The record gives the reactivity of an RNA of 177 nucleotides to 2A3 and DMS. Conditions: 150 mM KOAc, 10 mM MgCl2 and 150 mM bicine (pH 8.5), 24 C. For DMS the reverse transcriptase was MarathonRT.
RNA sequence: GGGAACGACUCGAGUAGAGUCGAAAAUUUAUAGCGCGCCAUUUGACGGAUGGUUUAUACUUGGCCCGGUAUUGUCGCCCCGGGCGUUGGCGUCACCGUGUGCUGUGUCGGUAUAGCGUGGUAUCAUAAUCUUUUUAUUCUUCGGAAUAAAAAGAUUAAAAGAAACAACAACAACAAC
Reactivity to 2A3 in 0.01 (KOAc 150mM, MgCl2 10mM, bicine 150mM(pH8.5), 24C), signal-to-noise 6, nucleotides 027 to 126: u090u110u060a190u050a050g040c020g000c020g010c020c020a060u050u040u140g110a060c040g040g000a010u040g020g060u040u170u060a080u040a040c050u080u180g070g000c000c000c000g010g010u090a130u100u150g070u070c030g040c000c020c000c000g010g030g020c010g010u010u070g020g010c020g010u030c010a010c040c010g060u060g040u050g060c050u030g000u030g070u100c040g020g010u080a050u080a080g060c050g010u020g020g020u040a030u100c010a010u030
Reactivity to DMS in 0.01 (KOAc 150mM, MgCl2 10mM, bicine 150mM(pH8.5), 24C), signal-to-noise 5, nucleotides 027 to 126: u030u040u030a090u020a120g000c060g020c080g020c020c020a040u010u010u010g020a100c090g010g000a050u010g000g000u000u010u010a040u030a050c080u010u020g000g010c010c010c010g000g000u000a050u010u020g020u000c050g010c100c110c040c040g000g000g010c060g010u010u010g000g010c030g030u000c040a070c090c050g000u010g010u010g020c020u010g020u010g020u000c030g000g010u000a060u010a070g020c050g030u000g010g010u010a060u020c060a130u020